This 177-nucleotide RNA was probed chemically with DMS and 2A3. The reactions ran in a buffer of 150 mM KOAc, 10 mM MgCl2 and 150 mM bicine (pH 8.5), at 24 C. For 2A3 the reverse transcriptase was SuperScript II with manganese. For DMS the reverse transcriptase was MarathonRT.
[RMDB]
RNA sequence: GGGAACGACUCGAGUAGAGUCGAAAACGUGGUGCCGUGCGACGGCUGUGCGGCUGCGCUGGCGUGCUUUGAUGCGCUGACGGCGUCGUUCUCCGACUGCGUGUGCAGCUGCCGCGCCGGCGGUGUGCAGUAAUAGUCCAUUCGUGGACUAUUACUGAAAAGAAACAACAACAACAAC
Reactivity to DMS in 0.01 (KOAc 150mM, MgCl2 10mM, bicine 150mM(pH8.5), 24C), signal-to-noise 5, nucleotides 027 to 126: c090g020u030g010g020u010g000c010c000g040u020g000c020g010a090c050g010g000c020u020g010u020g020c010g010g000c020u010g020c030g020c020u000g010g010c010g030u010g000c070u040u040u030g020a110u000g000c010g000c010u010g010a100c080g000g000c110g010u000c020g010u010u010c050u010c090c030g010a120c040u040g010c000g010u020g030u010g020c010a020g010c020u000g000c040c020g010c010g010c040c030g000g000c010g010g000u000g000u020g010
Reactivity to 2A3 in 0.01 (KOAc 150mM, MgCl2 10mM, bicine 150mM(pH8.5), 24C), signal-to-noise 9, nucleotides 027 to 126: c070g070u130g050g110u140g040c020c020g050u150g070c060g080a170c030g120g050c070u080g060u080g010c020g010g000c010u030g000c020g000c030u040g020g000c010g010u020g010c050u250u250u300g090a190u130g030c010g010c030u050g050a050c050g070g030c020g000u010c010g020u110u080c090u050c080c020g050a070c050u160g020c020g070u110g050u080g020c000a010g000c010u050g000c010c000g010c010g010c010c010g010g000c030g010g020u130g020u060g030